This 177-nucleotide RNA was probed chemically with DMS and 2A3.
For 2A3, 8,059 sequencing reads were counted.
As a SHAPE reagent, 2A3 marks flexible, mostly unpaired nucleotides at the ribose 2'-OH.
The reactions ran in a buffer of 150 mM KOAc, 10 mM MgCl2 and 150 mM bicine (pH 8.5), at 24 C.
2A3 adducts were read by reverse transcription with SuperScript II with manganese.
RNA sequence: GGGAACGACUCGAGUAGAGUCGAAAAAAUCAGCUCCUAGAUGCAGGAGUGUUGACAAGAGCAGAGCAUCAGAUUGGGAAAGAAGUCCUGCGAGUAAUAUCGACCAUUUGUCCAACCUAUCAGGUGGUAUAUCGUUACGUUUCGACGUAACGAUAUAAAAAGAAACAACAACAACAAC
Reactivity to DMS in 0.01 (KOAc 150mM, MgCl2 10mM, bicine 150mM(pH8.5), 24C), signal-to-noise 8, nucleotides 027 to 126: a080a070u010c050a170g010c000u000c040c020u010a100g010a130u010g040c110a110g010g000a030g020u000g010u000u000g010a080c090a060a060g000a100g010c050a040g000a150g010c030a030u010c060a060g000a110u010u000g010g000g010a060a090a080g000a070a070g010u000c030c050u000g000c040g010a070g000u000a060a080u010a090u000c060g010a100c040c040a080u000u000u010g000u000c020c030a050a080c030c030u000a070u000c110a040g010g010u000g000g020
Reactivity to 2A3 in 0.01 (KOAc 150mM, MgCl2 10mM, bicine 150mM(pH8.5), 24C), signal-to-noise 4, nucleotides 027 to 126: a000a010u100c020a010g010c000u000c010c000u030a070g030a140u090g040c040a010g010g020a020g000u040g060u050u090g020a030c050a100a020g010a020g090c040a000g020a000g040c010a020u010c010a010g050a170u090u120g020g010g040a000a130a030g040a060a000g070u020c000c000u020g000c000g000a020g020u050a050a060u050a030u140c030g030a050c050c010a060u050u050u060g040u030c040c000a070a070c040c030u090a110u200c040a010g000g040u010g030g020